[RMDB]
RNA sequence: GGGAACGACUCGAGUAGAGUCGAAAAGGUUGCGGUUCGCCGCAACCAAAAAAGAUAUGGAUGUACGUAGACAUGACCUGAUCACAUCGGAAACGAUGUGCGUAGGUCAACAGCUACUACAUCCUAAGUCAAAAAGAGAGCUGUUCGCAGCUCUCAACAGACGUUUACCGUUCGCGGUAAACGUCUGAAAAGAAACAACAACAACAAC
Reactivity to 2A3 in 0.01 (KOAc 150mM, MgCl2 10mM, bicine 150mM(pH8.5), 24C), signal-to-noise 1, nucleotides 027 to 156: g020g000u000u000g000c010g070g050u020u220c230g040c040c010g000c010a000a000c000c010a000a010a000a000a020a000g000a000u030a000u000g000g000a000u000g000u000a040c140g000u040a010g110a040c170a300u300g000a000c060c000u000g000a010u300c000a000c000a000u000c010g000g000a000a000a000c030g000a000u010g000u010g040c000g110u240a000g000g000u000c040a000a000c000a010g000c000u000a000c000u000a000c000a000u010c000c000u030a010a010g000u000c040a000a050a010a150a010g000a000g000a000g000c000u020g020u250u110c280g090c150a000g010c000u100c080u080c000a000a010
Chemical mapping of a 207-nucleotide RNA with 2A3. 2A3 adducts were read by reverse transcription with SuperScript II with manganese. The RNA was probed in 150 mM KOAc, 10 mM MgCl2 and 150 mM bicine (pH 8.5) at 24 C. Values cover nucleotides 27 to 156. The data come from the RNA Mapping Database (RMDB), library RNAMAK.